[RMDB]
The record gives the reactivity of an RNA of 177 nucleotides to 2A3. For 2A3, 439 sequencing reads were counted. It was measured as part of the RMDB library OK1LIB.

RNA sequence: GGGAACGACUCGAGUAGAGUCGAAAACACUGGCCAACCCCAACGUCGAUGCGAAAAGCGCACGGGGCGUGUGUGCCGCCGGUGAGCACAUGCUGUCACCGAGUGAGGGGGAAGAGGCACAGAUUAGCGCACGAUUACGCUUCGGCGUAAUCGUGCGAAAAGAAACAACAACAACAAC
Reactivity to 2A3 in 0.01 (KOAc 150mM, MgCl2 10mM, bicine 150mM(pH8.5), 24C), signal-to-noise 1, nucleotides 027 to 126: c050a000c020u110g020g000c000c000a010a010c000c000c000c060a060a060c000g270u190c020g050a170u040g050c000g220a000a060a180a130g090c000g020c000a000c000g000g130g000g000c000g000u070g040u010g060u040g000c000c000g000c010c000g040g100u020g000a010g100c000a000c020a000u090g000c110u170g070u050c000a040c300c000g010a110g050u120g010a100g000g030g000g000g000a100a100g100a100g000g000c120a000c000a230g040a100u070u290a000g180